[RMDB]
RNA sequence: GGGAACGACUCGAGUAGAGUCGAAAAGAUAUGGACGAUGCAUAAGGACAUCGAUCGUUUGUCGGAAACGACAAACGGGAGUCCUAUGUCAUCGUCCUAAGUCAAAACGGUGACUUCGGUCACCGAACUGUACCUUAUGCUUCGGCAUAAGGUACAGAAAAGAAACAACAACAACAAC
Reactivity to 2A3 in 0.01 (KOAc 150mM, MgCl2 10mM, bicine 150mM(pH8.5), 24C), signal-to-noise 3, nucleotides 027 to 126: g040a030u100a080u190g010g010a000c010g010a000u000g000c020a010u140a300a300g010g010a010c050a300u260c270g120a080u080c010g010u010u010u010g010u010c020g000g030a040a070a120c000g000a000c000a000a000a000c000g010g020g020a020g000u000c010c000u020a030u030g100u210c000a000u000c000g000u020c000c000u010a000a000g010u000c000a020a000a110a140c010g000g000u010g010a000c000u070u130c300g180g000u030c000a000c020c000g000a010a000
Reactivity to DMS in 0.01 (KOAc 150mM, MgCl2 10mM, bicine 150mM(pH8.5), 24C), signal-to-noise 2, nucleotides 027 to 126: g000a050u000a300u000g000g000a010c000g030a000u000g000c010a070u010a140a280g070g020a040c000a280u010c200g010a050u020c000g000u010u010u000g020u000c000g000g030a090a090a150c000g020a020c000a000a000a000c000g010g010g010a050g020u000c000c000u000a000u000g010u030c040a000u020c000g000u000c000c000u000a020a040g000u000c020a090a030a100a280c030g000g000u010g020a050c000u000u010c260g000g000u000c010a000c000c000g000a010a030

This 177-nucleotide RNA was probed chemically with 2A3 and DMS. Conditions: 150 mM KOAc, 10 mM MgCl2 and 150 mM bicine (pH 8.5), 24 C. High 2A3 reactivity points to a flexible backbone, as in loops and unpaired stretches. DMS adducts were read by reverse transcription with MarathonRT. Source: RMDB library TTRDES, as collected in RNAgym. For DMS, 1,485 sequencing reads were counted. 2A3 adducts were read by reverse transcription with SuperScript II with manganese.